Structure probing data (DMS and 2A3) for a 207-nucleotide construct. Source: RMDB library M2RFPK, as collected in RNAgym. The reactions ran in a buffer of 150 mM KOAc, 10 mM MgCl2 and 150 mM bicine (pH 8.5), at 24 C. For 2A3 the reverse transcriptase was SuperScript II with manganese. The DMS profile rests on 2,082 reads. DMS adducts were read by reverse transcription with MarathonRT.

[RMDB]
RNA sequence: GGGAACGACUCGAGUAGAGUCGAAAAACUGGUUUAGGGUUCCAGGCUAGCCCUAUCUAUCGGUCGAGAUGCGAGCGCUUAAGCUCAAAUUGAGUGGCUGAGUUAGUGGUGAACGUAUCCCUAUGUUAAAACGGUAGCUGCUUCGGCAGCUACCGAAGUGUCUUAUGUUGUUCGCAACAUAAGACACAAAAGAAACAACAACAACAAC
Reactivity to DMS in 0.01 (KOAc 150mM, MgCl2 10mM, bicine 150mM(pH8.5), 24C), signal-to-noise 2, nucleotides 027 to 156: a070c050u000g000g020u000u010u020a000g050g040g030u000u000c000c090a160g040g000c030u000a260g020c020c010c000u000a010u000c050u000a100u000c010g050g000u000c000g010a300g000a070u010g030c300g020a090g050c020g100c270u000u010a090a170g000c000u000c010a030a170a090u000u000g000a250g050u010g010g050c040u000g000a100g030u010u010a030g030u020g060g020u000g010a070a100c060g000u000a040u000c000c000c010u000a240u000g010u020u000a040a100a050a250c000g020g000u000a000g000c000u000g030c000u000u000c300g050g030c010a010g020c010u010a000c000c000g000a000a020
Reactivity to 2A3 in 0.01 (KOAc 150mM, MgCl2 10mM, bicine 150mM(pH8.5), 24C), signal-to-noise 2, nucleotides 027 to 156: a000c010u030g000g000u070u090u070a080g050g000g000u100u060c020c010a010g020g090c050u040a020g010c010c000c020u020a000u010c020u020a140u040c000g000g000u010c020g050a010g020a130u000g000c010g000a000g000c030g010c200u300u240a150a070g000c000u000c000a010a020a000u010u020g020a040g070u210g030g000c000u010g010a000g020u000u030a050g010u120g160g000u020g030a050a020c030g060u080a070u110c010c010c010u010a050u060g050u010u100a060a120a010a030c000g000g000u010a000g000c000u010g010c010u060u040c130g080g000c000a000g000c010u000a000c010c000g000a010a000